Description: Chemical mapping of a 207-nucleotide RNA with DMS and 2A3. The reactions ran in a buffer of 150 mM KOAc, 10 mM MgCl2 and 150 mM bicine (pH 8.5), at 24 C. It was measured as part of the RMDB library OK3TST. For DMS, 15,259 sequencing reads were counted. In probing experiments dimethyl sulfate is read out at A N1 and C N3, which are open when not base-paired. For 2A3 the reverse transcriptase was SuperScript II with manganese. The 2A3 profile rests on 19,762 reads.
[RMDB]
RNA sequence: GGGAACGACUCGAGUAGAGUCGAAAAUGUGCUGAGUAAGGUACCUAACAUCAUUUGAGCAGUGGUGGCAUUAGGUAAAUGCCUUUAGGUAAGAAAGAGAACCCUAUCCACUGAGUAGAACAACUCAAGGUGUUACGUAAAAUGAGAGAUAAACAAACAAUCCUAGACAAUUCGUUGUCUAGGAUUGAAAAGAAACAACAACAACAAC
Reactivity to DMS in 0.01 (KOAc 150mM, MgCl2 10mM, bicine 150mM(pH8.5), 24C), signal-to-noise 6, nucleotides 027 to 156: u000g030u010g030c010u010g010a130g020u000a060a060g020g020u000a080c010c020u010a040a050c010a030u000c010a140u000u000u000g010a060g040c040a100g010u000g020g030u020g000g020c100a110u010u000a020g010g010u010a060a070a080u000g020c010c000u000u000u000a050g020g020u010a110a140g010a090a100a150g020a150g000a100a160c100c010c030u000a120u010c030c020a040c030u000g010a100g040u000a120g020a100a130c060a070a080c000u000c020a040a070g000g020u000g010u000u000a040c070g010u000a020a040a060a090u010g000a100g010a120g010a100u000a070a050a090c100a060a080a200
Reactivity to 2A3 in 0.01 (KOAc 150mM, MgCl2 10mM, bicine 150mM(pH8.5), 24C), signal-to-noise 9, nucleotides 027 to 156: u130g020u020g000c030u030g020a070g090u120a090a050g060g010u030a030c000c020u020a010a010c000a020u030c020a070u020u040u070g030a020g000c010a000g000u010g020g030u030g010g000c020a020u010u050a060g100g050u130a090a050a020u030g000c000c000u050u070u040a030g000g010u050a080a070g070a200a140a000g110a020g030a040a040c030c000c000u010a020u020c010c000a010c010u010g010a010g030u110a030g050a130a040c060a040a020c020u000c010a010a020g020g000u010g010u020u020a030c060g020u050a020a040a060a100u140g030a050g000a010g010a080u140a080a120a020c060a030a050a000